The record gives the reactivity of an RNA of 177 nucleotides to 2A3 and DMS. The RNA was probed in 150 mM KOAc, 10 mM MgCl2 and 150 mM bicine (pH 8.5) at 24 C. For 2A3 the reverse transcriptase was SuperScript II with manganese. Values cover nucleotides 27 to 126. It was measured as part of the RMDB library OK2TRN.
RNA sequence: GGGAACGACUCGAGUAGAGUCGAAAAAAGCCUCUGUUGCAUGGAGCCAGAAUGGGUUACCAAAGUGCUAGCUGAUUUAGAGGCAGAUAGCACUGAAGAAGAGCACCUGUGCAAGAUAGAAGACACCGCUAAAUCACAUGUUCGCAUGUGAUUUAGCAAAAGAAACAACAACAACAAC
Reactivity to 2A3 in 0.01 (KOAc 150mM, MgCl2 10mM, bicine 150mM(pH8.5), 24C), signal-to-noise 2, nucleotides 027 to 126: a000a010g070c030c010u040c030u010g070u030u040g030c020a030u020g000g030a020g020c020c000a050g080a170a090u180g040g000g060u130u140a160c040c020a110a070a000g000u010g000c010u000a000g000c000u010g040a080u150u190u240a200g050a110g300g000c010a000g010a010u000a010g000c000a000c020u020g010a050a020g080a090a000g030a060g020c020a050c030c010u020g020u050g000c010a020a050g030a160u140a030g060a060a000g070a010c030a010c090c070
Reactivity to DMS in 0.01 (KOAc 150mM, MgCl2 10mM, bicine 150mM(pH8.5), 24C), signal-to-noise 3, nucleotides 027 to 126: a090a090g010c040c000u010c020u000g010u000u000g010c030a030u000g010g010a120g000c020c030a110g010a150a110u010g000g000g000u000u000a160c070c030a040a180a040g020u000g000c000u000a000g010c010u000g000a040u000u000u030a130g020a150g010g010c000a000g000a030u000a000g000c000a030c000u010g000a180a100g000a090a100g010a160g010c050a090c050c020u000g000u000g010c040a060a030g010a140u000a040g000a080a070g000a060c090a140c130c090